[RMDB]
RNA sequence: GGGAACGACUCGAGUAGAGUCGAAAAUCUGGAAAUUGUCAGAAAGACAGUGCUUCGUCACGCUAGAGCGCUCGCUGCCAUACUUGCAACAGUGACAGCGAUAAUUGCCGUUAUUGGCUGGUGGCAAAGCGUCAUUUUAGUUCGCUAAAAUGACGCUAAAAGAAACAACAACAACAAC
Reactivity to DMS in 0.01 (KOAc 150mM, MgCl2 10mM, bicine 150mM(pH8.5), 24C), signal-to-noise 2, nucleotides 027 to 126: u010c010u030g050g010a060a090a070u000u000g030u000c030a120g000a070a170a140g010a030c030a030g010u000g020c110u000u010c150g010u010c020a030c040g030c040u000a050g010a080g030c030g000c080u000c030g010c010u010g000c000c000a040u000a040c070u000u010g010c140a040a060c140a070g000u000g000a010c000a000g000c000g020a040u010a010a030u000u010g030c070c020g020u000u000a130u010u010g020g020c030u010g000g030u000g010g000c000a040a090
Reactivity to 2A3 in 0.01 (KOAc 150mM, MgCl2 10mM, bicine 150mM(pH8.5), 24C), signal-to-noise 2, nucleotides 027 to 126: u030c000u000g040g060a090a060a060u080u020g020u030c040a070g200a180a150a010g020a050c010a000g010u020g050c020u100u130c030g040u050c030a000c030g020c030u030a030g010a010g070c030g000c020u010c020g020c020u010g000c030c000a120u090a170c030u030u120g030c050a110a020c020a100g030u000g020a020c000a010g020c000g010a010u110a120a100u180u120g010c040c000g020u030u030a120u080u050g050g000c010u050g110g020u010g040g000c030a050a050